[RMDB]
RNA sequence: GGGAACGACUCGAGUAGAGUCGAAAAAUAGUGAUGCUGUAUCCUACAAGUCUAGUACAACGUAUAAACUGACUGUAGGUGACAUCUUCGUACUUACCUCUCACUCUGUGGCUACCUUGACGGCGCCGCCAAUACGUUCGUUCGCGAACGUAUUGGCAAAAGAAACAACAACAACAAC
Reactivity to 2A3 in 0.01 (KOAc 150mM, MgCl2 10mM, bicine 150mM(pH8.5), 24C), signal-to-noise 1, nucleotides 027 to 126: a000u150a000g050u000g010a020u010g020c040u060g010u050a040u000c000c020u000a000c000a130a050g000u000c040u160a010g010u050a060c040a150a030c230g160u170a050u080a230a130a060c000u000g000a000c000u000g030u000a000g000g000u020g010a000c000a010u000c030u030u030c020g050u030a030c010u050u040a000c000c010u010c020u020c010a030c010u040c030u030g100u040g050g000c010u060a050c010c000u050u070g120a010c020g020g030c030g020c030c010
Reactivity to DMS in 0.01 (KOAc 150mM, MgCl2 10mM, bicine 150mM(pH8.5), 24C), signal-to-noise 2, nucleotides 027 to 126: a040u010a080g010u000g060a040u000g010c100u000g030u020a140u000c000c000u000a030c010a010a120g000u000c010u010a050g040u000a120c180a070a090c300g040u000a160u010a060a090a060c040u000g000a000c020u000g000u010a010g000g000u000g000a030c040a020u000c000u010u010c020g040u000a060c060u000u000a090c040c010u010c010u000c080a100c040u000c050u000g030u000g030g000c030u050a100c080c010u000u000g010a060c120g010g000c280g000c060c090
Description:
This 177-nucleotide RNA was probed chemically with 2A3 and DMS. The DMS profile rests on 924 reads.